About this RNA: Conditions: 150 mM KOAc, 10 mM MgCl2 and 150 mM bicine (pH 8.5), 24 C. This 177-nucleotide RNA was probed chemically with DMS and 2A3.

[RMDB]
RNA sequence: GGGAACGACUCGAGUAGAGUCGAAAAGAUAUGGAUGCUCGUUCUAAGGACAUCGAUCAUCGCUCGGAAACGAGCGAUGGGAGUCCUGACGAGGCAUCCUAAGUCAAAACAUCGGUUCGCCGAUGAACUGAUUGAUUGUCUUCGGACAAUCAAUCAGAAAAGAAACAACAACAACAAC
Reactivity to DMS in 0.01 (KOAc 150mM, MgCl2 10mM, bicine 150mM(pH8.5), 24C), signal-to-noise 2, nucleotides 027 to 126: g000a040u000a290u010g020g000a050u000g030c010u000c000g010u010u000c300u030a130a030g030g030a010c030a260u020c190g020a120u000c010a000u010c010g030c000u000c010g000g000a110a070a120c010g010a010g030c000g010a000u010g000g010g000a040g040u000c010c010u000g000a010c020g000a050g020g030c040a000u000c000c000u000a010a050g010u000c020a080a070a080a260c040a010u000c000g020g000u000u000c210g050c000c010g010a000u000g000a120a260
Reactivity to 2A3 in 0.01 (KOAc 150mM, MgCl2 10mM, bicine 150mM(pH8.5), 24C), signal-to-noise 2, nucleotides 027 to 126: g000a020u060a040u140g010g010a000u000g000c020u000c020g090u260u060c180u290a190a160g030g010a020c020a210u300c250g060a070u050c010a000u010c000g000c010u000c000g130g010a060a080a090c030g010a020g030c000g020a000u030g000g010g000a030g000u000c010c020u000g000a010c000g000a110g020g070c000a020u000c000c010u020a080a020g020u000c020a000a020a110a100c000a010u030c000g020g050u090u120c300g000c090c010g010a010u060g060a070a090
Record summary:
Reactivities are given for positions 27 through 126.